Notes: The record gives the reactivity of an RNA of 177 nucleotides to 2A3 and DMS. The RNA was probed in 150 mM KOAc, 10 mM MgCl2 and 150 mM bicine (pH 8.5) at 24 C.
[RMDB]
RNA sequence: GGGAACGACUCGAGUAGAGUCGAAAAACCCUUGAGUUAGCGGCUCAGGUGGAUUCGUCUAUCCUAUGGCCGAUCCCCUUGGAGGGAACCGUUUUAUUGCAUGACCGUCGAUGUUACCGCAUCGGCGCUCUAGACAGAAGUUCGCUUCUGUCUAGAGAAAAGAAACAACAACAACAAC
Reactivity to 2A3 in 0.01 (KOAc 150mM, MgCl2 10mM, bicine 150mM(pH8.5), 24C), signal-to-noise 3, nucleotides 027 to 126: a000c020c010c000u010u100g080a090g020u100u110a070g050c010g020g000c020u030c060a010g000g040u100g040g000a020u090u030c110g010u000c070u020a120u230c020c000u110a150u180g030g000c000c000g000a050u040c000c010c000c000u050u160g170g030a130g000g020g050a030a020c020c010g080u020u070u120u130a180u120u150g130c150a080u170g070a100c040c000g010u000c000g000a000u000g030u080u090a090c020c070g030c010a000u010c000g000g040c000g000
Reactivity to DMS in 0.01 (KOAc 150mM, MgCl2 10mM, bicine 150mM(pH8.5), 24C), signal-to-noise 5, nucleotides 027 to 126: a100c010c000c020u000u010g010a090g010u000u000a130g020c050g010g000c030u000c260a060g010g010u010g030g010a080u000u010c280g000u010c010u000a080u000c090c060u000a100u000g000g000c000c010g000a060u000c020c030c050c030u000u000g020g010a110g020g010g000a060a120c060c040g010u000u000u000u000a080u020u010g010c120a080u010g010a070c200c010g010u000c000g010a000u000g000u000u020a110c300c270g000c000a000u010c000g010g010c010g000
For DMS the reverse transcriptase was MarathonRT. For DMS, 4,085 sequencing reads were counted.